[RMDB]
An RNA of 177 nucleotides, treated with DMS and 2A3 and read out base by base. It was measured as part of the RMDB library OK1LIB. For DMS, 13,876 sequencing reads were counted. 2A3 adducts were read by reverse transcription with SuperScript II with manganese.
RNA sequence: GGGAACGACUCGAGUAGAGUCGAAAAGACGGCGGCCUCACAGGAGACGGACACUUGGUUCGCCGACUAUAAGGUCACCCGGCCGGGUAAGAUGUACCCAGACCGUUACGGCUUUCUUGAUGGAGAGUCCUAUUGAGAGUUUCGACUCUCAAUAGGAAAAAGAAACAACAACAACAAC
Reactivity to DMS in 0.01 (KOAc 150mM, MgCl2 10mM, bicine 150mM(pH8.5), 24C), signal-to-noise 6, nucleotides 027 to 126: g010a040c110g000g000c100g000g010c020c000u000c070a080c140a050g020g000a080g010a050c020g000g010a020c040a200c200u040u040g000g000u000u000c010g020c020c010g000a050c020u000a060u030a100a060g010g010u000c000a120c030c050c040g010g050c060c070g000g000g000u010a040a120g010a080u030g010u020a040c020c000c000a080g010a090c050c010g000u020u010a080c150g010g000c020u000u010u010c000u000u020g000a140u050g000g000a030g010a110g010
Reactivity to 2A3 in 0.01 (KOAc 150mM, MgCl2 10mM, bicine 150mM(pH8.5), 24C), signal-to-noise 6, nucleotides 027 to 126: g090a000c030g010g020c000g010g010c020c010u050c030a080c040a050g050g050a050g040a030c030g040g020a010c010a020c130u130u150g150g010u140u150c030g000c010c000g000a000c000u020a030u030a140a050g030g000u020c020a050c010c010c020g020g020c020c030g000g000g010u050a080a060g080a270u220g080u170a040c000c000c010a020g020a080c010c000g000u030u070a050c080g020g000c000u000u060u000c020u060u150g080a140u180g060g020a060g010a020g100